[RMDB]
RNA sequence: GGGAACGACUCGAGUAGAGUCGAAAAAACAUAUUGUAUCAACGGUUGACACCGUACAUAGCAGAGGGAACCCUUCACUUUCCGUCAUCUCUUAUCCGGAAGUUCAGAAAAGAACUUCACUUAGUAAAUAGGGUAGAUAUUUCGAUAUCUACCCUAUAAAAGAAACAACAACAACAAC
Reactivity to DMS in 0.01 (KOAc 150mM, MgCl2 10mM, bicine 150mM(pH8.5), 24C), signal-to-noise 6, nucleotides 027 to 126: a080a040c080a080u000a100u010u000g020u000a080u010c120a120a050c030g010g010u010u000g010a170c190a140c020c010g000u000a080c130a040u000a090g010c070a060g000a130g010g010g000a060a060c060c030c020u000u010c080a080c100u000u000u000c030c030g000u000c060a070u000c020u000c030u000u000a080u010c090c120g000g000a020a000g000u000u000c010a080g000a090a080a100a120g000a010a010c010u000u000c010a080c130u000u000a080g000u000a040a070
Reactivity to 2A3 in 0.01 (KOAc 150mM, MgCl2 10mM, bicine 150mM(pH8.5), 24C), signal-to-noise 2, nucleotides 027 to 126: a000a000c110a080u300a080u080u110g030u070a090u090c080a030a010c020g020g040u000u110g050a040c050a010c080c000g020u000a010c010a030u070a000g070c020a010g040a050g030g030g050a010a040c040c000c000u030u050c030a040c050u050u030u060c020c000g060u030c020a100u050c020u000c000u120u000a070u080c000c070g080g000a000a000g000u040u010c010a070g210a300a190a080a010g000a030a060c000u000u000c010a060c010u030u070a020g050u170a060a090
This 177-nucleotide RNA was probed chemically with DMS and 2A3. Reactivities are given for positions 27 through 126. The reactions ran in a buffer of 150 mM KOAc, 10 mM MgCl2 and 150 mM bicine (pH 8.5), at 24 C. For 2A3 the reverse transcriptase was SuperScript II with manganese.